[RMDB]
RNA sequence: GGGAACGACUCGAGUAGAGUCGAAAAUUGCCUUGGUGGAGACCGAGGUGACUUGUGAGAUAGUGAAACCCGUACCGCCGGAGGCUGGAAACAGAGCACGGAAAAGGGUUCGCUGUAGUACGGUGUAAGGAUAACAGUAGUUGUGUAACUUCCUGGCGAAACGUACUUGGUUCGCCAAGUACGUUUCAAAAGAAACAACAACAACAAC
Reactivity to 2A3 in 0.01 (KOAc 150mM, MgCl2 10mM, bicine 150mM(pH8.5), 24C), signal-to-noise 1, nucleotides 027 to 156: u090u060g000c000c000u020u010g030g000u030g030g100a110g080a050c020c020g030a010g000g000u030g000a040c040u100u110g030u020g130a100g040a090u080a050g030u030g080a090a040a040c000c010c010g030u060a050c030c100g050c020c020g000g020a080g180g000c000u010g000g070a040a060a000c020a010g020a000g030c070a020c030g010g000a030a050a080a110g000g010g070u000u000c020g010c010u030g010u060a020g020u030a020c060g000g010u010g010u070a040a050g030g030a050u080a100a040c020a050g100u120a010g010u050u020g010u010g010u030a090a020c070u080u060c060c030u020g010g000c010